[RMDB]
RNA sequence: GGGAACGACUCGAGUAGAGUCGAAAAGGACUUAGGUUCGCCUAAGUCCAAAUAACGUCUACAAGUACGGUAGACGAAGAUAACGUACUGUACAGAAGUACAAAAGGAGAGACUUCGGUCUCUCCAACCUGAGUUAAAAGUUCGCUUUUAACUCAGGAAAAGAAACAACAACAACAAC
Reactivity to 2A3 in 0.01 (KOAc 150mM, MgCl2 10mM, bicine 150mM(pH8.5), 24C), signal-to-noise 5, nucleotides 027 to 126: g000g000a000c000u010u000a010g030g020u050u050c170g060c050c000u000a000a000g000u000c000c000a000a010a000u010a010a010c010g000u000c000u010a010c010a110a060g200u060a070c120g080g000u010a010g000a010c020g000a030a020g050a070u190a110a010c050g000u010a010c040u040g030u080a060c040a100g170a240a020g130u010a010c010a020a100a010a040g010g000a000g000a000g000a000c010u040u050c220g040g000u000c000u000c000u000c010c000a000a000
Reactivity to DMS in 0.01 (KOAc 150mM, MgCl2 10mM, bicine 150mM(pH8.5), 24C), signal-to-noise 4, nucleotides 027 to 126: g000g000a010c000u000u000a000g010g000u000u000c300g020c010c010u000a010a000g010u000c000c010a010a040a040u000a120a130c060g010u000c000u020a000c000a120a060g010u010a080c160g000g010u010a010g010a010c010g010a100a050g000a090u010a080a170c090g000u000a020c040u000g000u000a100c160a160g000a100a050g030u000a010c030a070a040a110a090g000g000a020g000a000g000a000c000u000u010c140g030g000u010c000u000c000u000c000c000a010a010